[RMDB]
RNA sequence: GGGAACGACUCGAGUAGAGUCGAAAACGCGACUGCGCGCAGACACUGACCUUCAGCGCCUCGGCUCCAGCGCCAUGGCGCCCUCCAGGAAGUUCUUCGUUGGGGGAAACUGGAAGAUGAACGGGCGGAAGCAGAGUCUGGGGGAGCUCAUCGGCACCAUCCGGAGGAAUUUCGAUUCCUCCGGAUGAAAAGAAACAACAACAACAAC
Reactivity to 2A3 in 0.01 (KOAc 150mM, MgCl2 10mM, bicine 150mM(pH8.5), 24C), signal-to-noise 1, nucleotides 027 to 156: c050g070c040g070a090c080u130g070c070g000c000g000c060a000g020a020c040a010c070u080g100a180c030c030u040u080c070a030g000c010g000c000c040u120c040g040g030c010u080c060c000a060g050c020g000c090c010a060u110g090g000c070g000c000c030c030u000c000c000a010g020g030a050a060g100u120u130c030u110u070c050g270u140u140g030g000g000g010g000a030a020a030c040u050g020g020a100a010g060a120u150g050a080a050c030g020g010g010c030g000g010a020a000g010c010a020g010a000g070u040c010u040g010g020g000g010g010a020g000c000u000c080a080u050c070g100g000c000a000c160